[RMDB]
RNA sequence: GGGAACGACUCGAGUAGAGUCGAAAACGACCAUGGAGAUAACAUGUAGCGCUGUAUGCUUGCACAACUGCUCUGCAUCCGAAGCUAUCUGCAGUGCCAGCUCACGUGUCGGGGCUAUUAUUAAUGAGCAAGAAGAAACGUUCGCGUUUCUUCUUGCAAAAGAAACAACAACAACAAC
Reactivity to 2A3 in 0.01 (KOAc 150mM, MgCl2 10mM, bicine 150mM(pH8.5), 24C), signal-to-noise 2, nucleotides 027 to 126: c020g070a020c000c030a030u120g110g060a170g000a100u140a180a050c020a090u070g010u070a020g000c070g020c080u060g080u120a050u100g010c000u050u150g050c090a050c000a160a140c050u040g040c050u030c020u060g000c010a030u020c060c040g070a120a000g000c030u050a060u160c070u070g000c050a010g000u030g080c080c000a040g040c000u000c020a050c050g090u060g020u040c040g010g000g050g050c090u080a040u220u010a070u070u140a170a090u140g070a050
Reactivity to DMS in 0.01 (KOAc 150mM, MgCl2 10mM, bicine 150mM(pH8.5), 24C), signal-to-noise 2, nucleotides 027 to 126: c050g040a140c110c010a100u000g000g020a150g000a140u010a050a090c090a050u000g020u010a070g030c030g030c060u030g020u000a050u000g030c030u000u010g000c170a110c120a090a130c140u000g010c020u010c020u000g000c000a060u010c100c040g000a090a160g020c070u000a030u020c030u000g000c030a080g010u000g020c120c050a080g040c030u010c060a080c060g030u000g000u010c060g010g010g010g040c040u000a060u000u010a110u020u000a060a080u000g000a170